[RMDB]
RNA sequence: GGGAACGACUCGAGUAGAGUCGAAAAAGUGGGACUGGCAAUCGAGCCAGACGUAUGCGUCCUGAAUGGGCGUGCGUGCAGUGGAUCUCUGGAUAUGCAGUCCGCCGUCCAGCGUCAUUCCGCAGAGGGCGCGGCGCAGGUUCGCCUGCGUUGCGCCAAAAGAAACAACAACAACAAC
Reactivity to 2A3 in 0.01 (KOAc 150mM, MgCl2 10mM, bicine 150mM(pH8.5), 24C), signal-to-noise 5, nucleotides 027 to 126: a000g150u150g030g030g040a050c020u020g060g090c010a010a080u070c090g030a020g010c010c000a010g010a010c000g030u030a040u190g040c000g020u030c000c010u110g220a230a120u230g010g010g000c000g030u030g020c020g030u050g050c070a050g030u080g040g120a200u030c030u000c010u060g090g000a040u060a100u230g030c000a000g040u030c020c010g000c000c010g040u040c000c000a010g020c000g070u050c020a070u120u000c030c010g040c070a030g030a120g090
Reactivity to DMS in 0.01 (KOAc 150mM, MgCl2 10mM, bicine 150mM(pH8.5), 24C), signal-to-noise 2, nucleotides 027 to 126: a060g060u000g020g000g030a070c000u000g010g030c000a050a130u020c120g010a130g000c000c000a050g000a040c060g040u000a060u020g000c020g030u000c010c000u040g010a110a110u040g010g010g000c000g010u030g000c020g000u010g000c070a140g010u020g000g010a080u010c020u000c050u030g030g000a040u010a090u020g030c000a050g020u000c070c020g000c040c050g000u010c000c000a050g020c140g040u000c070a060u000u000c030c000g000c080a070g020a200g040

This 177-nucleotide RNA was probed chemically with 2A3 and DMS. DMS adducts were read by reverse transcription with MarathonRT. Conditions: 150 mM KOAc, 10 mM MgCl2 and 150 mM bicine (pH 8.5), 24 C.